[RMDB]
RNA sequence: GGGAACGACUCGAGUAGAGUCGAAAAUACUAAAUACUCUGUUAUAUAGAACUUUCUACGCCUUUUCCUCUAUGGCUAUGAAAGCGUGGACAACGGAGAUCAAAUAGACCAAUUACUGAAUAUGGCUCAUGAAUUGUGAAUUCGUUCACAAUUCAUGAAAAGAAACAACAACAACAAC
Reactivity to DMS in 0.01 (KOAc 150mM, MgCl2 10mM, bicine 150mM(pH8.5), 24C), signal-to-noise 3, nucleotides 027 to 126: u030a090c080u000a090a070a140u010a130c000u000c030u000g030u000u000a110u060a190u060a120g010a140a210c010u000u000u000c000u000a160c220g000c000c010u000u010u030u020c060c060u000c120u000a040u010g000g000c000u010a150u020g000a010a000a000g010c210g020u010g000g010a070c190a040a020c010g020g000a030g000a020u000c190a050a070a190u020a030g000a170c020c020a050a100u020u010a210c200u050g000a050a050u020a100u000g000g020c120u000
Reactivity to 2A3 in 0.01 (KOAc 150mM, MgCl2 10mM, bicine 150mM(pH8.5), 24C), signal-to-noise 8, nucleotides 027 to 126: u110a020c040u070a060a040a110u160a100c010u000c010u010g050u020u050a120u010a050u060a240g130a120a030c000u010u000u000c000u010a010c100g000c010c000u100u100u090u070c040c040u110c040u090a100u190g020g000c000u000a010u080g020a020a000a000g000c030g030u100g090g060a050c040a030a010c030g010g020a030g010a020u120c070a010a090a080u100a050g080a070c010c000a010a040u120u060a110c080u060g020a050a030u120a060u130g040g000c010u000

The data come from the RNA Mapping Database (RMDB), libraries RFM100 and RFMREP.
An RNA of 177 nucleotides, treated with DMS and 2A3 and read out base by base.
DMS adducts were read by reverse transcription with MarathonRT.
For 2A3 the reverse transcriptase was SuperScript II with manganese.